[RMDB]
RNA sequence: GGGAACGACUCGAGUAGAGUCGAAAACAUUUGUUUUGUACAGCAACAAACCAUAAGACAUUGUGAUAUUCUCUUGGUAGUGAUCCAACUACCACUUGAACAUCUUGGUGUAGAGAUGAAAUGUGUUUGUAGAGUAUUUCAUACUGAGACCUAAAAACUCCCGAUCUUUGUUCGCAAAGAUCGGGAGAAAAGAAACAACAACAACAAC
Reactivity to 2A3 in 0.01 (KOAc 150mM, MgCl2 10mM, bicine 150mM(pH8.5), 24C), signal-to-noise 1, nucleotides 027 to 156: c030a080u110u120u280g070u010u000u040u110g090u060a060c030a090g040c150a130a030c010a000a030a010c000c000a000u010a240a000g020a080c020a010u080u100g080u050g000a000u000a040u080u000c000u000c000u000u000g000g030u000a000g020u040g100a190u110c120c050a020a000c010u020a000c000c000a000c010u000u000g000a000a000c010a030u040c020u050u130g070g000u050g030u030a190g000a080g030a060u160g030a100a250a070u030g130u010g000u010u020u000g020u020a010g020a080g090u050a130u060u040u150c030a000u050a300c000u000g030a060g030a060c020c040u070a050a000a050a000a030
Annotation
Source: RMDB library OK3TST, as collected in RNAgym. The record gives the reactivity of an RNA of 207 nucleotides to 2A3. Values cover nucleotides 27 to 156. Conditions: 150 mM KOAc, 10 mM MgCl2 and 150 mM bicine (pH 8.5), 24 C. For 2A3 the reverse transcriptase was SuperScript II with manganese.